[RMDB]
RNA sequence: GGGAACGACUCGAGUAGAGUCGAAAACUAUGUACAGACAGUACAGUGGAUAAGGUCUAUAGAUAUCCAACUUUAACAAUGGUACUUGCAGUGGUAUCUAUCAAGAUAGGCAGGCUAUCAUAGAAAGAAGAUGUGUUUUAUUCGUAGGGCGCAUCUUAAAAGAAACAACAACAACAAC
Reactivity to DMS in 0.01 (KOAc 150mM, MgCl2 10mM, bicine 150mM(pH8.5), 24C), signal-to-noise 9, nucleotides 027 to 126: c020u000a060u010g010u000a030c020a120g000a130c200a140g010u000a010c010a040g020u010g000g010a070u010a050a070g010g000u010c070u010a130u010a090g010a060u000a020u000c010c020a070a180c090u010u020u030a070a120c170a080a040u010g000g000u000a040c030u000u000g000c040a100g010u020g020g020u010a000u000c000u000a080u040c200a080a040g000a030u000a020g010g010c050a040g000g010c160u000a010u010c010a020u000a080g000a060a100a100g010
Reactivity to 2A3 in 0.01 (KOAc 150mM, MgCl2 10mM, bicine 150mM(pH8.5), 24C), signal-to-noise 5, nucleotides 027 to 126: c010u020a050u070g000u010a010c010a090g150a020c020a010g050u010a010c010a020g020u010g050g010a050u010a060a040g050g020u000c040u040a000u030a000g020a020u020a010u020c010c010a030a060c070u050u070u100a090a020c070a070a080u100g050g000u040a040c010u020u040g020c040a030g040u040g100g030u020a000u000c010u010a070u050c040a050a020g010a050u010a000g000g050c040a020g030g000c010u010a000u030c020a010u030a040g100a020a110a010g170
The record gives the reactivity of an RNA of 177 nucleotides to DMS and 2A3. Values are in units of 0.01, from 0 to 300, in steps of 10. It was measured as part of the RMDB library OK1LIB. For DMS the reverse transcriptase was MarathonRT. 2A3 adducts were read by reverse transcription with SuperScript II with manganese. For 2A3, 16,888 sequencing reads were counted. The RNA was probed in 150 mM KOAc, 10 mM MgCl2 and 150 mM bicine (pH 8.5) at 24 C.